[RMDB]
RNA sequence: GGGAACGACUCGAGUAGAGUCGAAAAAACGCUGGGAUGCCUAGUACUGUGAGCGAGAUCGAUAAGUACACUGAAGCGCGCACGGUGUACUUUUGACGAUCUCCCACAGGACCGGCAUCCUGUGCUGAAGCGCGCACGGCAACCGAAAGGUGCGAAAGAUCAAUGUAGAGUUCGCUCUACAUUGAUCAAAAGAAACAACAACAACAAC
Reactivity to DMS in 0.01 (KOAc 150mM, MgCl2 10mM, bicine 150mM(pH8.5), 24C), signal-to-noise 2, nucleotides 027 to 156: a070a020c070g020c040u000g000g010g020a070u010g010c000c000u000a090g020u020a030c020u010g030u000g000a070g010c070g030a040g030a040u000c020g000a100u010a030a010g010u000a000c000a030c010u000g010a050a050g010c000g040c010g030c020a300c030g000g010u000g010u000a000c010u000u000u000u010g030a160c060g010a020u000c000u000c000c000c020a000c010a000g000g000a040c050c120g000g000c020a060u000c000c010u000g010u000g000c020u000g020a050a050g030c020g010c010g000c000a250c030g000g010c000a080a120c030c020g000a050a130a180g000g020u000g020c050g010a090a100a180
Reactivity to 2A3 in 0.01 (KOAc 150mM, MgCl2 10mM, bicine 150mM(pH8.5), 24C), signal-to-noise 6, nucleotides 027 to 156: a000a000c050g000c010u040g000g000g000a000u000g000c010c010u040a020g020u020a010c000u010g030u030g040a120g080c180g020a000g010a010u010c020g050a070u050a300a020g000u000a000c000a000c010u020g040a220a050g030c030g000c010g000c020a020c030g030g000u000g000u010a010c010u030u030u030u100g190a110c050g000a000u000c000u000c000c000c000a000c000a010g000g000a000c010c010g000g000c000a000u000c000c000u000g000u000g000c000u030g010a110a030g000c010g000c010g000c010a010c020g010g020c010a030a040c000c020g050a100a040a010g040g000u030g000c010g050a080a040a020